[RMDB]
RNA sequence: GGGAACGACUCGAGUAGAGUCGAAAAUGUCAUCUACCUUUAUGAAACAAGCACCUUAAAAGUCACAUCUUACUUACAUCAACUUUCAGUAUGCUAAUUCUCGGAAUUACCUUAUUAAAACAUGGUUACUACUUUUUACACUUGAGAAUAGUGAAAACGUACUCCCCAGUUUCGACUGGGGAGUACGAAAAGAAACAACAACAACAAC
Reactivity to 2A3 in 0.01 (KOAc 150mM, MgCl2 10mM, bicine 150mM(pH8.5), 24C), signal-to-noise 2, nucleotides 027 to 156: u120g010u020c020a130u030c060u050a110c000c010u070u200u050a170u130g100a090a040a000c150a220a000g000c000a060c010c000u050u230a060a070a000a000g030u030c030a100c000a300u050c020u040u180a030c000u000u090a060c040a220u030c000a000a130c040u030u140u050c010a060g080u040a090u110g030c010u040a000a190u100u070c090u070c020g020g040a090a010u090u050a060c000c000u100u030a160u050u120a160a000a000a030c040a060u040g000g000u050u000a000c000u020a020c000u040u070u020u000u040a070c060a010c000u190u090g000a030g000a120a000u180a020g070u180g060a000a240a000a000